[RMDB]
Notes:
Chemical mapping of a 207-nucleotide RNA with 2A3. Values cover nucleotides 27 to 156.
RNA sequence: GGGAACGACUCGAGUAGAGUCGAAAAAACGCUGCAUGAUCGUAAAACAUGCCCGGCUUACCGUGAGCCGCCUUUGAAAGAAAGGUUUACACGGACUCUGUUGCGUUACGCACGUACCUAACUUGUGAAAACGGCAUCUUGUUCGCAAGAUGCCGAACAUCUUGCAACCGUUCGCGGUUGCAAGAUGAAAAGAAACAACAACAACAAC
Reactivity to 2A3 in 0.01 (KOAc 150mM, MgCl2 10mM, bicine 150mM(pH8.5), 24C), signal-to-noise 1, nucleotides 027 to 156: a000a000c030g000c020u000g000c020a010u020g020a150u110c080g060u140a080a050a000a020c000a020u020g000c060c000c000g000g000c040u050u040a040c040c000g000u000g010a000g000c020c000g040c000c000u030u010u000g060a060a060a000g080a000a000a000g070g000u000u020u030a040c000a000c000g000g050a050c040u060c050u100g050u080u070g050c020g030u040u040a080c170g070c040a010c020g020u050a030c000c070u040a140a180c040u220u140g080u100g110a070a100a040a010c000g000g010c000a000u000c000u000u020g040u060u010c060g000c110a000a000g000a000u020g000c000c000g000a050a000
The 2A3 profile rests on 734 reads. Conditions: 150 mM KOAc, 10 mM MgCl2 and 150 mM bicine (pH 8.5), 24 C.